[RMDB]
An RNA of 177 nucleotides, treated with 2A3 and DMS and read out base by base.
The RNA was probed in 150 mM KOAc, 10 mM MgCl2 and 150 mM bicine (pH 8.5) at 24 C.
For DMS, 1,922 sequencing reads were counted.
The data come from the RNA Mapping Database (RMDB), library OK2TST.
RNA sequence: GGGAACGACUCGAGUAGAGUCGAAAAUAACAGCCGGUAGGAAGCCGGCUGGGUAUGGUAACUACGGGGAGGUCCAAUUGUGAGACCCGAACGACGACCCCGGUGCUUGUGGUACGAUUGGUCGACACACUAGCCAUUACUUCGGUAAUGGCUAGUGAAAAGAAACAACAACAACAAC
Reactivity to 2A3 in 0.01 (KOAc 150mM, MgCl2 10mM, bicine 150mM(pH8.5), 24C), signal-to-noise 1, nucleotides 027 to 126: u020a030a030c000a020g000c000c000g060g000u050a140g130g210a180a020g050c050c030g000g000c000u000g000g000g010u010a030u050g030g000u060a080a070c110u100a050c080g010g030g000g040a110g060g010u000c000c030a030a100u190u190g160u040g050a190g000a070c000c010c010g070a110a010c000g050a000c020g060a040c030c000c000c020g020g000u010g000c060u240u290g100u180g140g000u070a010c040g060a070u000u040g060g020u070c000g040a010c070a000
Reactivity to DMS in 0.01 (KOAc 150mM, MgCl2 10mM, bicine 150mM(pH8.5), 24C), signal-to-noise 2, nucleotides 027 to 126: u020a070a090c000a010g010c010c000g010g010u000a180g010g010a160a230g000c000c010g010g020c010u010g000g000g020u000a020u000g000g000u000a090a090c100u000a090c040g020g010g000g020a100g000g030u000c020c030a120a220u000u000g010u000g010a100g000a040c020c000c050g020a070a120c060g010a060c070g010a150c040c000c020c000g000g030u010g010c070u010u000g000u000g010g020u000a020c020g000a120u000u000g010g020u000c010g000a130c190a240